[RMDB]
This 177-nucleotide RNA was probed chemically with 2A3 and DMS. It was measured as part of the RMDB library OK1LIB. Conditions: 150 mM KOAc, 10 mM MgCl2 and 150 mM bicine (pH 8.5), 24 C. For DMS the reverse transcriptase was MarathonRT.
RNA sequence: GGGAACGACUCGAGUAGAGUCGAAAAGGGUCCGCCGGGCGCAUAAAGAACAUGUACUGCUGAAUCCGAUGGAGGGCGUCGCGCAGGCCGGCCACGGUGGCGGCGUACUUGGCCGCCGCGGCCCCGCCUUUAGGUCAUCCUUCGGGAUGACCUAAAGAAAAGAAACAACAACAACAAC
Reactivity to 2A3 in 0.01 (KOAc 150mM, MgCl2 10mM, bicine 150mM(pH8.5), 24C), signal-to-noise 5, nucleotides 027 to 126: g030g000g000u020c020c010g010c030c020g070g060g000c010g020c020a050u280a200a210a070g110a060a030c020a050u100g030u120a050c030u200g060c000u020g050a070a060u050c010c020g170a200u100g020g040a050g050g040g000c050g100u120c030g000c000g010c050a050g010g080c000c010g190g000c000c000a020c000g030g010u020g030g050c070g000g000c010g020u030a090c050u090u140g090g000c000c010g000c010c000g000c000g000g000c000c000c010c000g030c000
Reactivity to DMS in 0.01 (KOAc 150mM, MgCl2 10mM, bicine 150mM(pH8.5), 24C), signal-to-noise 4, nucleotides 027 to 126: g010g030g000u020c010c050g010c030c120g010g000g000c020g020c060a120u040a080a100a180g010a110a240c090a030u000g000u020a040c060u050g020c000u010g020a190a090u010c010c010g020a120u030g000g000a040g000g000g010c030g020u000c070g000c110g010c090a100g010g000c010c050g000g000c010c020a030c080g000g010u000g010g040c050g000g000c020g010u010a030c110u010u030g020g010c060c030g030c030c020g000c000g000g020c030c000c020c000g000c100